[RMDB]
RNA sequence: GGGAACGACUCGAGUAGAGUCGAAAAUAACACUAACAUAUAGUCAGUGGGAAAGAAAUCUCAGAAAAUAACUGUUAGUUUGUCACUGUCAUGGGAAAUGGGAAGGAAGAAAAACAGCACUUAUCAAGCAUCUUCUGUGUACAAACUGCCAUUUCAACUAGUGCGUACCUUUCGAGGUACGCACUAGAAAAGAAACAACAACAACAAC
Reactivity to 2A3 in 0.01 (KOAc 150mM, MgCl2 10mM, bicine 150mM(pH8.5), 24C), signal-to-noise 1, nucleotides 027 to 156: u080a030a010c030a030c070u030a080a000c000a000u240a020u030a250g030u030c030a030g030u010g020g010g030a000a050a030g020a010a160a160u040c110u040c080a030g130a040a230a040a020u040a030a090c000u070g010u060u000a040g010u030u090u090g280u050c040a000c030u020g010u110c010a020u130g040g020g090a080a060a060u020g000g000g040a020a030g020g010a020a010g040a020a080a040a000a020c000a040g050c040a000c040u080u070a090u190c030a000a030g030c020a060u030c010u040u000c000u020g080u010g020u130a070c070a010a010a000c050u060g000c000c030a050u050u090u070c000a010a010